[RMDB]
RNA sequence: GGGAACGACUCGAGUAGAGUCGAAAAAUCACGCCCCCGAAGGGAGGGGGAACGUGCGGAAAGAGGGGGCGUAUCCGUUCCAUGAGACGGGCAUAGAGACCGAUCACCCCUUCGGGCGAGUCCUCGCCACAGACUUGACUUUCGAGUCAAGUCUGUGAAAAGAAACAACAACAACAAC
Reactivity to 2A3 in 0.01 (KOAc 150mM, MgCl2 10mM, bicine 150mM(pH8.5), 24C), signal-to-noise 2, nucleotides 027 to 126: a000u060c040a030c010g000c020c020c030c000c000g060a060a000g130g030g030a080g010g050g010g010g010a000a020c020g040u120g030c030g040g070a130a100a030g080a150g020g000g000g020g040c000g000u020a030u050c020c000g020u040u020c040c030a050u100g030a050g000a130c000g000g000g060c000a040u100a100g150a000g020a040c010c000g030a070u030c030a080c020c000c010c000u000u020c030g000g020g000c040g000a010g070u050c010c030u000c030g000c020
Reactivity to DMS in 0.01 (KOAc 150mM, MgCl2 10mM, bicine 150mM(pH8.5), 24C), signal-to-noise 4, nucleotides 027 to 126: a080u010c060a050c050g020c010c020c000c000c000g000a140a080g000g000g020a060g000g010g020g010g000a030a010c100g030u010g000c060g020g000a110a080a140g010a160g000g000g000g010g010c010g000u010a050u000c080c050g000u010u000c010c050a140u020g010a140g000a040c030g010g000g020c090a130u010a090g010a180g000a090c030c020g000a110u010c040a260c030c010c000c020u000u000c020g000g010g010c020g010a080g010u010c040c050u000c040g030c100